[RMDB]
RNA sequence: GGGAACGACUCGAGUAGAGUCGAAAAGUCUCAAGAUGCCUUCUUCAGCUUAGGUGUGUGCCAGAGUUGCAAAGCUUCUUACUCUCCUGCAACCUUGUGAGCUUUUGGGAGAUGCUACAAAUGCCUGCUACAUGCGAAUUUUCGAAUUCGCAUGUAGAAAAGAAACAACAACAACAAC
Reactivity to DMS in 0.01 (KOAc 150mM, MgCl2 10mM, bicine 150mM(pH8.5), 24C), signal-to-noise 4, nucleotides 027 to 126: g010u000c020u010c060a100a120g010a060u000g010c040c010u000u010c040u000u010c070a070g010c080u010u010a070g010g010u000g010u000g040u010g010c030c050a210g010a060g030u010u000g010c160a070a080a140g010c050u000u000c030u010u000a110c080u010c030u000c020c020u000g010c100a050a050c070c060u010u010g020u000g020a090g000c060u000u000u000u000g010g010g010a090g000a060u000g000c050u000a100c080a070a060a100u000g000c010c040u010g000
Reactivity to 2A3 in 0.01 (KOAc 150mM, MgCl2 10mM, bicine 150mM(pH8.5), 24C), signal-to-noise 2, nucleotides 027 to 126: g030u020c000u000c040a000a000g120a040u080g030c010c030u040u040c020u010u050c080a040g000c020u050u070a030g030g010u060g030u040g030u080g050c000c030a020g020a020g040u070u030g030c030a050a090a060g020c000u090u010c000u000u080a090c030u010c000u000c020c010u030g010c030a070a070c010c020u090u060g110u070g060a030g020c040u110u100u160u090g030g000g000a050g000a040u070g050c030u050a040c040a050a080a020u050g030c000c010u010g090
Structure probing data (DMS and 2A3) for a 177-nucleotide construct. For DMS the reverse transcriptase was MarathonRT. It was measured as part of the RMDB library OK2TRN.